[RMDB]
RNA sequence: GGGAACGACUCGAGUAGAGUCGAAAAGGCGAGAGGGUCUCACCUCUUAGGGUCCUCAUAACGGCCAUUCUCGGCGCCGCCCCAUCCUACCCUCUCCAGGCCAGCCAGCGCCGGGAUGAGUUAGGGGGAGAGAGGAAUACUUCGGUAUUCCUCUCUCAAAAGAAACAACAACAACAAC
Reactivity to DMS in 0.01 (KOAc 150mM, MgCl2 10mM, bicine 150mM(pH8.5), 24C), signal-to-noise 3, nucleotides 027 to 126: g000g020c050g010a060g000a020g010g020g000u010c200u010c160a160c040c030u020c060u010u020a100g010g010g000u020c010c030u000c080a120u020a100a100c160g010g010c050c030a160u010u000c050u000c030g000g000c030g000c030c070g000c040c000c010c060a090u010c030c020u000a090c060c110c000u010c000u000c020c110a050g000g020c070c110a150g010c100c090a100g020c070g000c000c000g000g010g000a000u010g000a050g010u000u000a070g000g020g010g000
Reactivity to 2A3 in 0.01 (KOAc 150mM, MgCl2 10mM, bicine 150mM(pH8.5), 24C), signal-to-noise 2, nucleotides 027 to 126: g030g020c040g010a030g020a020g020g000g040u070c050u040c090a150c020c020u030c030u020u060a070g020g020g020u120c000c050u060c030a060u090a170a060c080g070g020c030c000a050u170u050c040u000c030g030g040c040g010c020c000g060c020c000c030c020a060u110c010c020u020a080c010c010c000u010c010u020c020c010a050g080g000c020c000a050g090c060c050a040g000c050g000c010c010g010g000g000a030u090g030a040g060u050u090a030g010g000g020g020